The record gives the reactivity of an RNA of 177 nucleotides to 2A3 and DMS.
Values cover nucleotides 27 to 126.
RNA sequence: GGGAACGACUCGAGUAGAGUCGAAAAUUACUGGUGGGUGGCGGAGAAGAGAUCGUGACAUCGUAGACCUAUGGCUUAGAUUGAUGACCUCCAUUGCACUUUGGAGGGGUGCCUGCCUAAAGUCUGCUAAACUUCGGGGAUUCGUCCCCGAAGUUUAAAAAGAAACAACAACAACAAC
Reactivity to 2A3 in 0.01 (KOAc 150mM, MgCl2 10mM, bicine 150mM(pH8.5), 24C), signal-to-noise 2, nucleotides 027 to 126: u130u040a040c030u030g010g010u080g070g000g000u020g000g000c020g010g030a030g020a020a020g020a000g000a060u100c060g030u070g050a010c010a000u100c080g000u000a000g000a000c000c050u030a070u090g030g000c050u080u060a050g030a140u110u230g020a070u160g060a150c000c000u010c000c000a030u040u120g030c190a140c190u060u010u060g000g000a000g000g000g000g070u100g100c000c070u000g000c000c000u030a080a000a000g060u010c000u010g040c000
Reactivity to DMS in 0.01 (KOAc 150mM, MgCl2 10mM, bicine 150mM(pH8.5), 24C), signal-to-noise 3, nucleotides 027 to 126: u000u030a100c050u010g020g020u010g000g000g060u040g020g030c060g000g030a190g010a160a060g010a070g030a040u030c040g070u040g000a150c170a060u000c150g030u040a040g000a020c000c020u000a130u030g000g010c000u020u060a120g000a220u060u050g000a170u040g010a060c040c000u000c000c000a020u000u010g000c270a050c190u000u000u000g000g000a020g000g010g010g010u000g010c040c070u040g020c010c000u030a100a110a260g000u020c000u000g000c110
DMS adducts were read by reverse transcription with MarathonRT.